[RMDB]
RNA sequence: GGGAACGACUCGAGUAGAGUCGAAAAAGAUCAGUAGGGACGAAGUGAAAGGGCCAGUACCAGCAGAAGAAGAACAGGCCAAUUACGUGCCAGCAGCCGAAGUAAUACGUAGGGUCCGAGCGUAUCAAAAAUUAUAUAUAUUCGUAUAUAUAAUUUUAAAAGAAACAACAACAACAAC
Reactivity to DMS in 0.01 (KOAc 150mM, MgCl2 10mM, bicine 150mM(pH8.5), 24C), signal-to-noise 1, nucleotides 027 to 126: a080g000a100u010c030a030g020u020a050g000g000g000a060c050g010a150a150g030u010g000a040a060a110g040g000g010c030c020a080g010u000a080c030c050a060g000c080a030g010a090a110g000a100a080g000a070a060c110a050g000g000c020c020a090a090u060u030a070c060g010u000g000c020c020a100g010c040a060g060c010c040g020a030a150g010u030a070a060u040a010c030g000u000a070g000g010g000u000c050c030g010a040g020c010g000u010a030u020c040a020
The record gives the reactivity of an RNA of 177 nucleotides to DMS. DMS adducts were read by reverse transcription with MarathonRT.